An RNA of 177 nucleotides, treated with 2A3 and DMS and read out base by base.
The data come from the RNA Mapping Database (RMDB), library OK1LIB.
The reactions ran in a buffer of 150 mM KOAc, 10 mM MgCl2 and 150 mM bicine (pH 8.5), at 24 C.

[RMDB]
RNA sequence: GGGAACGACUCGAGUAGAGUCGAAAAUAUACAUCAGAAGUCGGCACAACUCCCGACUCGCGGUGAGCGAUGCAGCGUAGCGCGAGCUACGCAGCUGCUGUGCGGAUGGCUAGCUCUUGCUAGCCUACGAUAAUCCGCACUUCGGUGCGGAUUAUCGAAAAGAAACAACAACAACAAC
Reactivity to 2A3 in 0.01 (KOAc 150mM, MgCl2 10mM, bicine 150mM(pH8.5), 24C), signal-to-noise 3, nucleotides 027 to 126: u160a000u020a020c040a030u070c030a020g050a110a040g140u020c000g000g140c190a040c040a300a300c110u040c000c000c000g000a010c000u000c010g020c040g000g050u060g050a020g020c010g120a140u140g030c010a010g000c010g000u010a000g010c020g000c050g030a020g000c000u010a000c000g000c010a000g000c000u040g000c010u030g050u120g040c010g010g080a110u110g030g000c000u000a010g000c000u030c030u170u300g000c000u000a000g000c020c000u000a000
Reactivity to DMS in 0.01 (KOAc 150mM, MgCl2 10mM, bicine 150mM(pH8.5), 24C), signal-to-noise 4, nucleotides 027 to 126: u010a150u030a150c080a050u000c050a060g010a150a040g000u000c000g000g010c250a090c140a100a130c300u020c120c000c000g000a080c060u040c020g040c300g000g010u030g020a090g000c050g000a070u020g010c000a050g010c000g000u000a000g010c010g010c300g000a220g010c000u000a000c000g000c010a030g000c010u000g020c030u000g020u040g020c080g000g010a070u020g000g030c000u000a000g000c020u040c210u020u020g000c000u000a010g000c000c000u000a000

DMS adducts were read by reverse transcription with MarathonRT.